[RMDB]
RNA sequence: GGGAACGACUCGAGUAGAGUCGAAAAGGGGAACAUUUUGUCACCCCUCACGUCUAGUCCCGUUCCGGUUCUAUGAAAAGGACUUUCCGGUACCCCUUGAGUACUGGGAACAAAUCCUCCUCCGAAGCAUGUGUAGUGUCUUCGGACACUACACAUGAAAAGAAACAACAACAACAAC
Reactivity to DMS in 0.01 (KOAc 150mM, MgCl2 10mM, bicine 150mM(pH8.5), 24C), signal-to-noise 2, nucleotides 027 to 126: g000g000g050g010a300a020c000a150u000u020u000u010g000u000c090a060c020c000c000c000u000c100a120c110g000u010c070u010a170g010u000c010c060c020g000u010u000c020c010g010g000u000u000c030u000a110u040g010a040a070a140a070g020g010a070c170u000u000u000c000c010g010g000u000a000c000c040c130c130u030u000g020a010g010u000a000c000u000g010g000g000a000a040c190a030a070a210u010c000c000u000c020c020u000c010c020g000a080a160g010
Reactivity to 2A3 in 0.01 (KOAc 150mM, MgCl2 10mM, bicine 150mM(pH8.5), 24C), signal-to-noise 2, nucleotides 027 to 126: g000g000g020g030a000a060c040a050u060u100u180u300g120u100c080a300c010c000c000c000u010c010a070c040g020u010c060u100a020g110u010c050c000c000g030u100u070c020c040g000g090u110u000c030u040a150u220g160a110a070a010a010g050g010a010c010u000u000u020c000c000g010g000u010a020c030c050c010c130u090u090g070a090g050u040a000c000u020g020g000g020a030a010c050a030a130a010u000c000c000u020c000c010u000c010c000g020a070a000g080
Chemical mapping of a 177-nucleotide RNA with DMS and 2A3. 2A3 adducts were read by reverse transcription with SuperScript II with manganese. For DMS, 1,286 sequencing reads were counted.